[RMDB]
RNA sequence: GGGAACGACUCGAGUAGAGUCGAAAACCGAAUUCGUUCGGACCUUGUCCUAAGUCUUCGAUAAGGAUCUGCCAGGCAUCGAUCUAUGUCGGAAACGACAUAGGGAGCCUGAUGAUCCUUUUGACGAAGAUAUGGAGAUGUGCUUAUUCGUAAGCAAGAACGGAAGUAAUUUCGAUUACUUCCGUUCAAAAGAAACAACAACAACAAC
Reactivity to 2A3 in 0.01 (KOAc 150mM, MgCl2 10mM, bicine 150mM(pH8.5), 24C), signal-to-noise 4, nucleotides 027 to 156: c010c000g020a030a040u170u160c250g060u070u010c010g050g030a130c020c000u030u140g110u050c010c010u060a140a100g030u000c000u010u000c010g030a040u010a070a000g000g000a010u000c010u040g270c110c010a000g000g020c010a180u300c130g050a010u000c010u010a000u010g010u000c000g010g050a090a080a080c020g000a010c000a000u010a000g000g000g000a010g000c010c000u000g000a000u030g000a000u000c000c000u000u000u010u040g050a030c010g000a000a000g000a000u030a040u070g050g000a080g000a100u160g060u070g150c000u040u030a050u090u160c300g140u150a050a000g000c020a020a070
Reactivity to DMS in 0.01 (KOAc 150mM, MgCl2 10mM, bicine 150mM(pH8.5), 24C), signal-to-noise 2, nucleotides 027 to 156: c010c010g000a030a030u000u010c220g010u000u030c020g000g020a210c030c040u000u000g000u000c000c030u000a110a200g020u000c010u000u000c000g010a270u000a000a020g000g000a010u000c010u020g060c080c010a030g010g030c020a280u010c150g000a050u000c020u020a000u010g010u000c000g000g000a140a130a300c010g010a000c000a020u000a030g010g010g000a040g010c010c000u000g010a040u000g000a020u000c000c000u000u000u000u000g020a260c120g020a030a020g030a030u000a220u000g000g000a150g000a090u000g010u000g030c010u000u000a070u000u000c240g030u000a050a050g010c010a090a220